[RMDB]
RNA sequence: GGGAACGACUCGAGUAGAGUCGAAAAGCUCUGAGAGUCAGAUCGAACAACAAAGAGAGAUCGAAAAUCUUAGGGGAGAGAACGAAUCUGUCGUCUUCUCUAGGACAUUGUCGAUCAGAUGUCCAAAGACCAUUCAUUCCUUCGGGAAUGAAUGGUCAAAAGAAACAACAACAACAAC
Reactivity to 2A3 in 0.01 (KOAc 150mM, MgCl2 10mM, bicine 150mM(pH8.5), 24C), signal-to-noise 2, nucleotides 027 to 126: g000c000u020c000u010g140a030g020a000g040u000c060a000g010a000u050c010g050a020a010c010a060a020c080a010a260a030g150a010g000a000g000a070u000c000g040a000a090a000a000u000c000u000u000a000g030g000g060g000a010g010a000g000a050a080c020g040a040a100u060c090u250g270u040c020g000u000c010u030u000c000u000c000u000a010g000g000a000c020a150u090u180g040u000c030g000a030u000c000a000g010a080u040g030u000c000c020a070a050a000
Reactivity to DMS in 0.01 (KOAc 150mM, MgCl2 10mM, bicine 150mM(pH8.5), 24C), signal-to-noise 2, nucleotides 027 to 126: g000c000u010c000u030g000a140g000a080g000u000c000a160g000a090u000c040g000a060a070c100a030a100c220a000a150a130g000a150g000a150g000a030u000c000g010a030a020a080a300u000c000u000u000a010g000g000g000g000a000g000a100g010a070a020c000g000a080a140u090c180u060g000u000c080g010u000c000u000u000c000u030c000u000a010g000g000a010c220a130u000u000g000u010c000g000a010u000c010a110g000a030u030g000u000c010c080a000a100a070
An RNA of 177 nucleotides, treated with 2A3 and DMS and read out base by base. For DMS the reverse transcriptase was MarathonRT. It was measured as part of the RMDB library OK1LIB. For DMS, 1,914 sequencing reads were counted. Reactivities are given for positions 27 through 126. Values are in units of 0.01, from 0 to 300, in steps of 10. The RNA was probed in 150 mM KOAc, 10 mM MgCl2 and 150 mM bicine (pH 8.5) at 24 C.